[RMDB]
RNA sequence: GGGAACGACUCGAGUAGAGUCGAAAAUUUACUAAACGAGGUGGUAAACCGUUUAUUAAGGACUGUGUGCCCUGUUAUAAGCGAUGUAAUCUUCACAACAGUUCUAUAAAAUAGGACUGUUAUCCCCAUUUUACAGUUGAGGAAAUGAGGCAUAGAGCGCUCACAUACUAUUCGUAGUAUGUGAGCGAAAAGAAACAACAACAACAAC
Reactivity to 2A3 in 0.01 (KOAc 150mM, MgCl2 10mM, bicine 150mM(pH8.5), 24C), signal-to-noise 2, nucleotides 027 to 156: u010u010u090a070c070u040a030a080a030c090g050a010g060g000u050g010g030u060a010a120a000c000c020g050u010u020u020a090u030u040a040a020g090g040a010c130u060g040u020g130u130g140c010c010c010u040g030u110u140a070u010a090a010g010c000g000a010u020g030u050a130a020u110c050u140u150c070a050c020a130a030c000a000g000u000u000c010u000a030u030a090a150a160a050u030a000g000g000a000c000u010g000u020u030a010u020c000c060c000c000a000u060u040u010u090a130c050a090g030u050u010g130a050g020g090a010a050a150u030g010a030g090g000c030a050u040a030g100a000g010
Reactivity to DMS in 0.01 (KOAc 150mM, MgCl2 10mM, bicine 150mM(pH8.5), 24C), signal-to-noise 2, nucleotides 027 to 156: u000u000u000a140c070u010a040a090a150c060g000a120g010g070u000g030g000u040a120a120a060c030c000g030u000u010u000a000u000u000a120a030g020g040a020c000u010g010u000g040u010g060c040c000c000u020g010u000u010a070u000a040a040g040c040g040a030u010g010u000a080a140u010c060u000u010c060a140c030a070a020c000a040g000u000u000c000u000a030u000a110a060a070a300u030a010g000g000a020c000u000g020u010u010a070u000c000c000c010c030a120u000u000u000u000a150c040a140g020u030u010g000a120g000g000a040a010a030u020g030a000g000g060c090a110u000a090g020a090g000
Conditions: 150 mM KOAc, 10 mM MgCl2 and 150 mM bicine (pH 8.5), 24 C. Chemical mapping of a 207-nucleotide RNA with 2A3 and DMS. For DMS, 2,568 sequencing reads were counted. DMS (dimethyl sulfate) methylates the pairing face of unpaired adenines and cytosines. 2A3 adducts were read by reverse transcription with SuperScript II with manganese. Reactivities are given for positions 27 through 156. DMS adducts were read by reverse transcription with MarathonRT.